The record gives the reactivity of an RNA of 177 nucleotides to DMS and 2A3. DMS adducts were read by reverse transcription with MarathonRT. Source: RMDB libraries RFM100 and RFMREP, as collected in RNAgym.
[RMDB]
RNA sequence: GGGAACGACUCGAGUAGAGUCGAAAAAGCGACCUAUCAUUACGAUGAUAGGUCGCAAGUCAAGAGUCUUUGGCACCGUUUUUGGUGAGCAGAUUUCUUUUGCCUAUUGAAGGGUGAAAGACAUGAAGUAAAGUUACCAGUUCGCUGGUAACUUUACAAAAGAAACAACAACAACAAC
Reactivity to DMS in 0.01 (KOAc 150mM, MgCl2 10mM, bicine 150mM(pH8.5), 24C), signal-to-noise 4, nucleotides 027 to 126: a090g000c000g020a010c000c000u010a000u000c000a030u010u020a150c210g000a070u000g000a000u010a000g010g020u010c000g000c000a010a010g020u000c050a050a130g010a150g000u010c040u000u000u000g010g010c010a030c040c000g000u000u010u020u020u010g020g010u000g000a070g020c060a070g010a090u010u020u000c000u000u000u000u000g000c010c010u000a120u030u030g000a210a190g000g000g020u010g010a000a010a010g000a030c260a060u020g010a110a100
Reactivity to 2A3 in 0.01 (KOAc 150mM, MgCl2 10mM, bicine 150mM(pH8.5), 24C), signal-to-noise 5, nucleotides 027 to 126: a000g010c010g010a000c000c000u000a000u000c010a000u010u130a040c230g100a040u010g000a000u000a000g030g000u000c000g000c000a000a000g010u000c020a040a020g030a020g090u010c040u060u080u050g050g000c000a000c020c020g100u040u040u020u110u290g010g020u040g020a030g040c040a030g020a140u020u050u010c000u000u000u000u010g000c000c010u110a180u190u270g120a250a150g060g000g000u030g000a000a000a000g010a020c030a060u140g060a070a020
Source information
The RNA was probed in 150 mM KOAc, 10 mM MgCl2 and 150 mM bicine (pH 8.5) at 24 C.